Notes: Structure probing data (2A3 and DMS) for a 207-nucleotide construct. Conditions: 150 mM KOAc, 10 mM MgCl2 and 150 mM bicine (pH 8.5), 24 C.
RNA sequence: GGGAACGACUCGAGUAGAGUCGAAAAUGAUGACGUGAACUCUCAGAUUGCAAUUUUAUACUGAAAUGUAAGUUUUCAAAUUAUUUUGCUCCAUAAAGAAUAGGUGACUCAUUUUGAAUUCUGAAUGUGUACAUAUUUAUCUAUCAUCUAACACACACGUAACGUCAGUUUUCGAACUGACGUUACGAAAAGAAACAACAACAACAAC
Reactivity to 2A3 in 0.01 (KOAc 150mM, MgCl2 10mM, bicine 150mM(pH8.5), 24C), signal-to-noise 4, nucleotides 027 to 156: u070g010a020u040g010a010c140g050u030g060a050a050c010u010c010u000c050a040g020a180u060u130g030c020a040a060u050u080u130u080a100u100a180c050u060g020a060a020a070u140g020u120a070a100g020u030u030u020u020c020a040a050a030u040u030a060u020u100u040u030g020c020u000c020c020a050u100a200a150a020g050a090a080u090a070g000g060u010g040a020c000u020c050a030u000u040u030u110g140a150a140u200u040c040u100g030a080a010u030g010u010g000u050a070c020a040u160a110u070u160u040a100u020c040u070a040u040c020a030u040c040u080a110a040c040a010c020a020c050a030
Reactivity to DMS in 0.01 (KOAc 150mM, MgCl2 10mM, bicine 150mM(pH8.5), 24C), signal-to-noise 1, nucleotides 027 to 156: u020g000a080u000g000a060c020g030u010g030a060a070c020u000c000u010c000a100g010a060u000u010g000c000a050a030u000u020u020u000a080u000a090c060u000g000a030a010a060u000g020u010a060a080g020u000u000u000u000c040a070a030a110u000u000a070u000u000u000u010g020c030u030c050c040a110u000a090a170a150g000a080a120u000a060g000g050u010g010a140c080u000c040a070u020u000u000u000g000a110a120u010u000c110u000g010a110a060u000g000u000g060u000a070c070a100u000a050u000u000u000a060u020c020u000a100u010c020a060u000c050u000a050a110c040a010c040a030c060a110
The data come from the RNA Mapping Database (RMDB), library OK3TST.
For 2A3 the reverse transcriptase was SuperScript II with manganese.
2A3 is a SHAPE reagent: it acylates the 2'-hydroxyl of flexible nucleotides of all four kinds.